RNA sequence: GGGAACGACUCGAGUAGAGUCGAAAAUAAAAGGAGGAGGAGAAAUAUAGCGCGAGAUCGGUCCUCCCACGCGCGUCUCGCGCUGAUAAGCCGAAUAAGAGGAUGAUUAAUAGAUAGCGCGCAAAAAGGAAAAGAAAAGAUUCGUCUUUUCUUUUCCAAAAGAAACAACAACAACAAC
Reactivity to 2A3 in 0.01 (KOAc 150mM, MgCl2 10mM, bicine 150mM(pH8.5), 24C), signal-to-noise 1, nucleotides 027 to 126: u120a000a070a000a010g050g010a040g010g000a010g040g000a040g100a150a150a000u180a020u110a110g010c010g000c000g000a000g000a010u080c070g030g020u020c010c020u020c010c000c000a080c020g030c030g030c010g010u030c000u010c020g060c040g030c020u020g000a000u010a040a000g030c030c010g070a140a050u180a190a080g050a040g070g010a020u080g020a010u150u260a150a080u060a050g070a040u010a060g030c040g000c000g020c080a050a050a000a000a000
Reactivity to DMS in 0.01 (KOAc 150mM, MgCl2 10mM, bicine 150mM(pH8.5), 24C), signal-to-noise 2, nucleotides 027 to 126: u020a080a070a120a090g010g030a090g020g020a030g010g020a070g030a090a090a110u010a080u000a040g000c000g010c000g020a050g010a020u000c080g000g010u000c060c040u010c020c010c050a090c170g010c050g000c030g000u000c010u000c020g010c010g010c010u000g010a090u000a050a090g010c020c040g010a120a100u010a070a070g000a110g000g010a070u020g000a100u000u000a030a130u000a100g010a060u020a070g030c020g000c010g020c180a040a060a110a060a090